[RMDB]
RNA sequence: GGGAACGACUCGAGUAGAGUCGAAAACUCGUGGUUCCUGUGGUUCACACCUGACCUCCUGUGCAGAAAAGAAAAAAGAUAGGCGGCUCGGAGGAGCGCUUCAGGGAUCCCCGGGGAAACCUGGAGCCAUGUGUAAGAUCUUCGGAUCUUACACAUGAAAAGAAACAACAACAACAAC
Reactivity to DMS in 0.01 (KOAc 150mM, MgCl2 10mM, bicine 150mM(pH8.5), 24C), signal-to-noise 2, nucleotides 027 to 126: c030u000c010g020u020g010g010u000u000c030c010u000g010u000g010g010u010u000c100a080c100a080c030c010u010g010a130c040c010u000c020c010u010g010u000g020c070a090g010a040a050a070a160g010a020a060a090a080a070a080g000a110u000a080g010g020c080g020g020c030u000c130g000g010a060g000g000a060g030c060g010c000u000u000c010a030g010g000g000a260u010c020c020c040c150g010g020g010g000a020a020a180c010c010u010g010g000a020g000c020
Reactivity to 2A3 in 0.01 (KOAc 150mM, MgCl2 10mM, bicine 150mM(pH8.5), 24C), signal-to-noise 1, nucleotides 027 to 126: c000u000c030g040u040g120g010u030u000c000c000u050g090u140g030g050u090u140c100a040c010a020c080c020u010g050a050c050c000u020c020c020u080g000u060g080c040a040g180a160a140a050a000g210a070a210a010a090a000a040g110a100u050a070g140g000c040g030g000c100u010c040g020g030a040g040g000a010g020c020g000c000u030u010c000a000g000g000g000a020u020c000c000c000c000g260g050g000g000a000a060a000c000c000u000g000g000a010g000c000